[RMDB]
RNA sequence: GGGAACGACUCGAGUAGAGUCGAAAAGACCAGCUAGACCGCGGGGAGCGUUUUGCACAGGGGAUGAUUGAGCACGAGCGUCUUGGCGCUGUGCAUGUGACCGGCGGCGUGGAAGUGUUCGAUCACAAUCGAUAUAGCCAUUCGUGGCUAUAUCGAUAAAAGAAACAACAACAACAAC
Reactivity to DMS in 0.01 (KOAc 150mM, MgCl2 10mM, bicine 150mM(pH8.5), 24C), signal-to-noise 4, nucleotides 027 to 126: g010a190c020c020a130g000c100u000a120g010a080c040c050g020c050g000g020g010g010a130g020c040g000u000u000u020u010g000c040a080c080a080g010g010g010g020a150u010g000a040u000u000g010a050g000c030a020c040g000a150g000c030g010u000c020u010u010g010g000c040g020c000u000g010u000g000c050a050u010g020u010g000a180c020c000g000g010c080g000g010c020g030u000g020g000a080a120g000u000g010u000u000c050g010a080u000c040a050c200a110
Reactivity to 2A3 in 0.01 (KOAc 150mM, MgCl2 10mM, bicine 150mM(pH8.5), 24C), signal-to-noise 2, nucleotides 027 to 126: g030a060c010c010a000g040c040u040a060g060a180c010c020g030c040g040g020g000g000a020g010c010g000u090u090u150u120g020c040a030c000a030g000g000g040g080a040u070g010a020u060u110g020a030g020c030a020c100g070a070g030c020g040u020c040u090u140g090g020c040g000c070u040g050u110g060c000a030u090g050u010g040a140c000c010g090g000c030g000g000c010g010u040g040g060a130a070g020u000g020u040u050c040g030a100u040c030a010c030a020